[RMDB]
Structure probing data (2A3) for a 207-nucleotide construct. The reactions ran in a buffer of 150 mM KOAc, 10 mM MgCl2 and 150 mM bicine (pH 8.5), at 24 C. Source: RMDB library VIROID, as collected in RNAgym.

RNA sequence: GGGAACGACUCGAGUAGAGUCGAAAAGUUUGUAAAGAGGAGACUGCUGGACUCGCCGCCCAAGUUCGAGCUUGGGCCACAGUUCCGAGCGAAGAGACGCGGGUGGAAGGGAUCAGCGCCCGAGAGGGAGAAGACGGUAAAGAGCAUUGGAUCGCCGCACAGCGUAAUGGUUCGCCAUUACGCUGUGAAAAGAAACAACAACAACAAC
Reactivity to 2A3 in 0.01 (KOAc 150mM, MgCl2 10mM, bicine 150mM(pH8.5), 24C), signal-to-noise 1, nucleotides 027 to 156: g010u050u140u050g060u140a150a150a040g040a010g080g000a060g010a000c070u140g000c110u080g060g000a020c000u000c030g000c010c010g030c000c000c010a010a000g000u050u140c150g060a040g040c020u010u010g000g010g040c000c000a200c010a050g090u230u000c050c020g020a000g000c020g080a090a070g080a020g000a070c000g040c030g010g100g010u090g000g000a100a080g020g010g000a020u040c010a000g050c010g090c010c000c000g070a180g010a000g040g030g000a040g010a040a030g000a040c110g000g040u050a080a130a030g100a040g030c020a040u000u090g060g020a030u040c030g060c100c000g000